An RNA of 207 nucleotides, treated with 2A3 and read out base by base. Reactivities are given for positions 27 through 156.

[RMDB]
RNA sequence: GGGAACGACUCGAGUAGAGUCGAAAAGAGAUUUGCCUUGAAUUUUAUAGGGAAUAAUAGUCAUUGUACGACAACUAGUAGAGACUAUUAUUGCUUCGUGCUCACGAGGUUUCUUAGGAAUCAUGCAAUGUUCUUGAGCCUUUCAUGUUUAAAAAAAGUUUUAUUUUACCUUCGGGUAAAAUAAAACAAAAGAAACAACAACAACAAC
Reactivity to 2A3 in 0.01 (KOAc 150mM, MgCl2 10mM, bicine 150mM(pH8.5), 24C), signal-to-noise 2, nucleotides 027 to 156: g000a010g010a040u040u010u120g000c030c000u130u100g070a150a150u100u020u070u060a220u210a120g020g010g030a010a000u000a010a010u000a000g000u000c050a110u080u150g050u160a010c030g040a050c090a200a030c100u090a030g040u030a020g060a060g010a050c000u010a010u000u000a030u000u030g010c000u010u010c040g020u040g100c050u080c050a010c010g000a000g040g010u000u100u020c010u020u030a030g060g020a060a030u030c010a020u000g000c010a020a100u090g010u090u030c030u000u050g020a050g030c000c010u000u150u110c050a070u050g060u050u210u240a000a180a010a020a300a010a030